RNA sequence: GGGAACGACUCGAGUAGAGUCGAAAAGAUAUGGAUGCGAACUCUACUACCCACCUUCCACAUCGGAAACGAUGUAGGAAGAGGUAGAGGAGGUAUAUCCUAAGUCAAACCGGUGUUCGCACCGGAAUCUUAAUCAGAUCUUCGGAUCUGAUUAAGAAAAAGAAACAACAACAACAAC
Reactivity to 2A3 in 0.01 (KOAc 150mM, MgCl2 10mM, bicine 150mM(pH8.5), 24C), signal-to-noise 6, nucleotides 027 to 126: g030a020u090a040u180g010g010a020u030g080c130g130a140a090c010u030c010u060a170c010u020a020c050c020c030a230c030c030u010u000c000c000a010c000a010u000c000g000g030a040a050a020c020g000a010u010g030u050a260g030g000a010a010g000a010g000g000u010a000g050a140g050g020a030g000g090u090a100u020a010u100c000c010u030a110a030g050u030c040a040a040a140c010c000g000g000u030g000u060u130c300g020c130a010c010c010g010g000a010a040
Reactivity to DMS in 0.01 (KOAc 150mM, MgCl2 10mM, bicine 150mM(pH8.5), 24C), signal-to-noise 7, nucleotides 027 to 126: g010a040u000a300u000g000g000a010u000g030c160g010a110a180c000u010c010u000a300c000u000a010c010c000c030a300c200c000u000u000c000c000a020c000a000u000c000g000g000a110a090a150c010g000a000u000g000u000a110g030g000a010a010g000a040g010g010u000a000g010a300g000g000a020g010g000u010a100u000a030u000c000c010u000a050a190g010u000c030a080a100a200c010c000g020g000u000g010u000u010c200g020c000a010c000c010g010g000a030a000
This 177-nucleotide RNA was probed chemically with 2A3 and DMS. The DMS profile rests on 6,367 reads. Reactivities are given for positions 27 through 126. It was measured as part of the RMDB library TTRDEL.